[RMDB]
RNA sequence: GGGAACGACUCGAGUAGAGUCGAAAAGUGCCUCGUCGGCCCGGCAUGCCAACCUGAUCCGAAGUUUAAGGUGGUUUCUCUGGCCUUCCAGAGAGAUGCGCGUCGGAAGAACCGACGAACAAACCUUAAAACAAAACGACGUUCGCGUCGUUUUGAACAACUAAGUAAAGUUCGCUUUACUUAGUUGAAAAGAAACAACAACAACAAC
Reactivity to 2A3 in 0.01 (KOAc 150mM, MgCl2 10mM, bicine 150mM(pH8.5), 24C), signal-to-noise 3, nucleotides 027 to 156: g060u030g030c010c020u020c010g010u000c000g010g030c000c010c000g000g000c020a020u090g020c010c020a080a120c040c010u050g040a050u110c060c080g140a170a070g060u100u100u110a050a010g050g000u010g020g000u000u100u000c000u000c000u000g010g010c040c060u280u180c010c000a000g000a000g000a000g010a080u130g050c070g000c020g030u000c000g000g020a050a060g020a110a060c000c000g000a000c000g010a020a010c030a020a070a060c000c030u140u200a060a090a030a060c000a000a000a000a000c010g000a000c000g020u040u090c250g020c010g090u000c000g010u010u000u000u000g000a000a000
Reactivity to DMS in 0.01 (KOAc 150mM, MgCl2 10mM, bicine 150mM(pH8.5), 24C), signal-to-noise 3, nucleotides 027 to 156: g020u000g020c070c020u000c020g010u000c030g010g020c020c000c010g010g000c040a060u000g050c050c120a100a070c000c020u000g000a130u000c100c080g000a110a140g040u000u000u000a110a080g010g010u000g030g030u000u000u000c010u000c000u000g010g040c220c150u000u020c010c010a030g000a050g000a040g010a030u000g020c030g030c020g000u000c000g010g010a100a120g010a140a120c000c000g000a020c000g020a020a050c040a100a130a100c030c020u000u010a060a050a140a210c000a000a020a010a030c000g000a020c000g020u000u000c270g030c070g030u000c000g020u030u010u000u000g000a080a190

Chemical mapping of a 207-nucleotide RNA with 2A3 and DMS. DMS adducts were read by reverse transcription with MarathonRT. For DMS, 7,135 sequencing reads were counted.